[RMDB]
RNA sequence: GGGAACGACUCGAGUAGAGUCGAAAAGCGAGCCGAUCGGCGUUGUGACGGCCGCGAAGGACGACGAGACCGGCUGGCACCCCACGGCGAAGAUCAGCGCCACGGCGCGCGGCGACGAGGCGUAUCAGCCGUUGUACACUUUCGAGUGUACAACGGCAAAAGAAACAACAACAACAAC
Reactivity to DMS in 0.01 (KOAc 150mM, MgCl2 10mM, bicine 150mM(pH8.5), 24C), signal-to-noise 1, nucleotides 027 to 126: g000c010g010a070g000c000c000g030a080u000c000g030g020c050g000u010u000g060u000g000a230c100g020g000c020c040g030c020g000a190a100g010g010a170c000g020a060c030g020a280g000a110c070c040g000g000c010u000g000g020c000a140c050c000c000c040a030c060g000g020c010g040a060a040g000a090u000c160a070g010c010g000c020c030a030c070g010g000c010g010c030g010c070g010g010c000g000a040c070g010a080g010g000c020g020u000a050u010c110a230